[RMDB]
RNA sequence: GGGAACGACUCGAGUAGAGUCGAAAAGAACAGGACGACCAGAACGAGGGAGAUCAGCGAGGAGGCAAUGGGCACGACCAGGACGAGAUCCAGUUGCGGCUGCUGCAGCUGACUGGAUUGCAGCAGAAAAUUUAUAUCGGUUCGCCGAUAUAAAUUUAAAAGAAACAACAACAACAAC
Reactivity to 2A3 in 0.01 (KOAc 150mM, MgCl2 10mM, bicine 150mM(pH8.5), 24C), signal-to-noise 3, nucleotides 027 to 126: g010a060a030c030a030g010g060a050c030g020a030c010c040a030g020a070a020c040g030a060g060g020g000a060g010a070u090c040a010g060c010g060a050g020g010a020g030g000c000a020a060u070g030g000g030c050a010c060g040a040c020c010a030g010g040a010c020g030a020g010a080u010c030c010a010g000u030u100g120c040g050g000c000u030g000c070u120g040c050a000g010c010u040g070a110c040u040g020g010a020u030u050g000c000a020g040c020a010g140a020
Reactivity to DMS in 0.01 (KOAc 150mM, MgCl2 10mM, bicine 150mM(pH8.5), 24C), signal-to-noise 8, nucleotides 027 to 126: g010a100a080c080a070g000g000a070c070g010a100c070c050a080g010a070a090c130g000a080g010g000g020a060g000a060u010c080a060g010c090g010a100g010g000a060g000g010c080a060a060u000g010g010g000c060a070c080g010a090c040c030a060g000g010a070c070g010a130g000a090u000c020c030a040g000u000u000g020c060g000g010c010u000g010c110u000g000c010a030g010c040u000g010a080c080u010g000g000a050u000u000g000c030a050g000c030a060g000a080
Chemical mapping of a 177-nucleotide RNA with 2A3 and DMS. It was measured as part of the RMDB library OK2TST. For DMS the reverse transcriptase was MarathonRT. The RNA was probed in 150 mM KOAc, 10 mM MgCl2 and 150 mM bicine (pH 8.5) at 24 C.